[RMDB]
RNA sequence: GGGAACGACUCGAGUAGAGUCGAAAACUAUUUAUAGACAGAACAGUGGAAAACGUAUAUCGCUAUAAACCUUAAACACCGAAUCUUCCAGUCGUACUAUUCCACAUAGGCGAGGCAUAAGCGAAAGGAUCCAUAUGGGUUUCGACCCAUAUGGAUCAAAAGAAACAACAACAACAAC
Reactivity to 2A3 in 0.01 (KOAc 150mM, MgCl2 10mM, bicine 150mM(pH8.5), 24C), signal-to-noise 3, nucleotides 027 to 126: c000u030a060u040u050u110a150u030a000g090a030c090a090g060a080a000c030a050g010u050g040g070a150a140a030a000c000g000u030a050u030a010u220c000g020c050u040a020u030a120a040a090c000c030u030u100a050a060a060c030a030c020c070g080a090a050u030c100u080u000c010c000a010g020u020c000g000u020a060c000u010a040u050u020c020c000a030c000a060u040a030g000g050c010g020a010g020g000c020a040u050a120a010g010c000g080a140a000a050g130
Reactivity to DMS in 0.01 (KOAc 150mM, MgCl2 10mM, bicine 150mM(pH8.5), 24C), signal-to-noise 2, nucleotides 027 to 126: c060u050a260u000u000u030a100u030a070g010a050c040a250g000a040a090c120a040g030u030g000g000a100a070a090a030c110g000u030a010u010a040u000c070g000c010u000a020u000a030a090a110c080c080u010u000a030a070a080c000a050c020c020g020a050a100u010c030u000u000c030c000a100g010u000c010g000u000a060c040u030a100u000u010c070c040a090c000a070u020a090g000g000c040g000a030g010g020c170a050u010a070a060g010c100g020a040a090a110g010